[RMDB]
RNA sequence: GGGAACGACUCGAGUAGAGUCGAAAAAGAUGGCAGGUUCACCCCGUACGGUGCGGAAGUUCGCGCUUCCGUGAAACGCGAAAAGCGGACGGUGGCUGCAAGUCGCAUCGCAAAACCGCGGCAAGUGUUAACCUGGACCUCUUCGGAGGUCCAGGAACCUAACGCUUAACUUCGGUUAAGCGUUAGGAAAAGAAACAACAACAACAAC
Reactivity to 2A3 in 0.01 (KOAc 150mM, MgCl2 10mM, bicine 150mM(pH8.5), 24C), signal-to-noise 1, nucleotides 027 to 156: a000g150a070u100g030g000c050a070g000g040u200u100c000a040c000c000c000c000g030u050a010c050g100g060u050g020c000g030g020a030a050g020u120u290c080g010c040g000c120u000u010c000c010g010u020g060a100a080a000c080g010c010g150a060a050a060a110g000c010g000g010a000c080g030g000u020g000g020c020u040g000c030a050a020g030u000c000g020c030a050u020c090g020c100a080a090a000a050c050c040g000c000g040g000c070a060a080g000u010g000u210u090a040a030c000c000u000g000g000a000c000c010u000c000u000u000c030g130g000a000g000g000u000c030c020a000g000g000a000a000